Chemical mapping of a 177-nucleotide RNA with DMS and 2A3. The 2A3 profile rests on 5,537 reads.
[RMDB]
RNA sequence: GGGAACGACUCGAGUAGAGUCGAAAAGAUAUGGAAUAAGUAGGGAGCUCGCAUUCGGAAACGAAUGAUGAGCGAAGAACUACGUAUUCCUAAGUCAAAGAUACACAUUGUUCGCAAUGUGUAUCAAGCGAACAAUCUAGUUCGCUAGAUUGUUCGCAAAAGAAACAACAACAACAAC
Reactivity to DMS in 0.01 (KOAc 150mM, MgCl2 10mM, bicine 150mM(pH8.5), 24C), signal-to-noise 3, nucleotides 027 to 126: g020a020u000a000u010g000g010a020a000u000a000a060g000u000a010g030g000g010a040g010c000u000c000g010c000a000u000u000c000g010g000a010a000a020c000g010a040a000u010g000a020u000g020a020g010c010g010a060a050g030a210a300c010u000a000c010g010u010a010u000u000c010c000u010a010a120g000u000c020a070a120a130g000a000u010a010c010a000c000a000u000u010g010u000u010c300g000c000a010a010u020g010u000g000u000a010u000c000a070a170
Reactivity to 2A3 in 0.01 (KOAc 150mM, MgCl2 10mM, bicine 150mM(pH8.5), 24C), signal-to-noise 2, nucleotides 027 to 126: g000a000u010a010u040g000g010a020a010u050a100a080g010u010a010g010g000g070a050g010c000u010c020g040c010a020u000u030c010g030g050a010a010a000c000g020a000a030u020g030a170u120g010a000g010c000g020a050a020g010a000a010c030u010a000c000g000u010a020u020u000c010c000u000a000a000g010u010c020a130a000a210g000a000u020a000c000a000c000a000u010u020g070u070u090c290g060c180a010a010u010g010u000g000u010a000u000c000a000a000